This 177-nucleotide RNA was probed chemically with DMS and 2A3.
RNA sequence: GGGAACGACUCGAGUAGAGUCGAAAACUAUUGUGGUUCGCCACAAUAGGCAGGGCUGUUUUUCUCGCUGACUUUCAGCCCCAAACAUAAAAGUCAGCAUAAUUGUACUGCGCUUCGGCGCAGUAAACCUACUACUUGUGUUCGCACAAGUAGUAGGAAAAGAAACAACAACAACAAC
Reactivity to DMS in 0.01 (KOAc 150mM, MgCl2 10mM, bicine 150mM(pH8.5), 24C), signal-to-noise 4, nucleotides 027 to 126: c000u000a000u000u000g020u010g000g010u010u010c220g010c000c000a010c000a000a000u000a000g000g020c240a120g000g010g020c000u000g000u000u000u000u000u010c070u010c250g020c010u000g010a030c000u000u000u000c000a010g010c000c000c000c140a050a040a110c140a050u010a010a010a040a010g010u000c000a010g010c020a080u010a040a070u000u010g010u010a010c000u000g000c000g030c010u000u030c190g020g010c000g030c000a010g000u000a010a060a150
Reactivity to 2A3 in 0.01 (KOAc 150mM, MgCl2 10mM, bicine 150mM(pH8.5), 24C), signal-to-noise 4, nucleotides 027 to 126: c000u000a000u010u000g000u010g010g040u020u050c200g060c060c000a000c010a000a000u000a000g010g010c080a040g000g040g010c010u010g030u010u010u010u010u010c100u050c100g000c000u010g000a010c000u000u020u010c010a000g010c000c000c010c040a050a080a020c040a020u170a040a020a000a000g010u000c000a000g020c000a010u040a000a010u040u100g050u050a010c000u010g000c000g000c000u030u060c210g070g000c010g000c000a000g000u000a000a000a000

Conditions: 150 mM KOAc, 10 mM MgCl2 and 150 mM bicine (pH 8.5), 24 C.